[RMDB]
RNA sequence: GGGAACGACUCGAGUAGAGUCGAAAAGGGAGGCAGCCUGCACCCUCGGGGCCCCAGGGGGUGGGGCCCCAGCAGAUGUCUGGGAUUGGUAGCCAGGGCCUGGAGCCGGAUGCCGAGAAGGAGGCCUCCUAUACGAGCGAUUCGUCGCUCGUAUAGGAAAAGAAACAACAACAACAAC
Reactivity to 2A3 in 0.01 (KOAc 150mM, MgCl2 10mM, bicine 150mM(pH8.5), 24C), signal-to-noise 3, nucleotides 027 to 126: g060g010g020a010g000g010c010a000g100c010c000u090g020c050a080c020c010c000u020c040g030g010g000g000c000c000c000c020a070g070g000g020g030g040u050g000g000g000g010c000c000c000c000a000g000c000a010g060a130u160g040u080c030u060g000g020g030a070u060u110g070g000u030a010g060c020c020a050g000g000g060c000c040u040g070g010a010g020c020c000g010g020a020u090g060c030c020g040a060g020a040a020g040g040a020g040g000c000c000u000
Reactivity to DMS in 0.01 (KOAc 150mM, MgCl2 10mM, bicine 150mM(pH8.5), 24C), signal-to-noise 2, nucleotides 027 to 126: g000g000g000a000g000g000c000a030g000c020c010u010g000c060a070c050c070c020u000c100g030g000g010g040c000c010c000c010a060g010g010g000g000g010u000g010g000g010g000c000c010c020c000a000g020c050a120g010a120u020g000u030c040u010g000g000g010a210u020u040g010g010u010a040g000c040c030a070g000g020g000c050c030u000g010g010a070g020c000c070g000g000a090u010g000c030c010g000a130g000a110a050g000g000a050g000g000c000c010u010

This 177-nucleotide RNA was probed chemically with 2A3 and DMS. Reactivities are given for positions 27 through 126. For DMS the reverse transcriptase was MarathonRT. It was measured as part of the RMDB library RFM100.